The data come from the RNA Mapping Database (RMDB), library RNAMAK. This 207-nucleotide RNA was probed chemically with 2A3. For 2A3, 1,372 sequencing reads were counted. Conditions: 150 mM KOAc, 10 mM MgCl2 and 150 mM bicine (pH 8.5), 24 C.
RNA sequence: GGGAACGACUCGAGUAGAGUCGAAAAUAGAUCUUUCGAGAUCUAAAAAACCGUAGGUAUCUUGGACCUGGUUCAGCUUGGACCACUCUUUCGAAAGAGAGAGUGCUAGCUGGACCAGCUAGAUACCUAAACGGAAAAAGGCAGUUUCGACUGCCAACCAAUCGCUAACGUUCGCGUUAGCGAUUGGAAAAGAAACAACAACAACAAC
Reactivity to 2A3 in 0.01 (KOAc 150mM, MgCl2 10mM, bicine 150mM(pH8.5), 24C), signal-to-noise 2, nucleotides 027 to 156: u060a000g000a000u010c000u060u160u080c280g080a030g000a020u010c040u090a040a090a070a010a010a010c010c010g030u030a000g010g000u000a000u000c000u070u140g130g110a180c010c020u010g000g000u010u000c000a010g010c030u120u190g000g100a180c140c000a000c000u010c000u000u020u000c030g070a130a140a090g010a010g000a000g010a000g000u000g000c000u010a000g000c000u000g010g010a000c000c000a000g000c000u000a020g000a000u000a000c000c000u000a030a020a000c010g010g060a010a070a000a120a120g010g020c000a010g000u100u060u190c170g160a040c000u000g020c000c010a000a020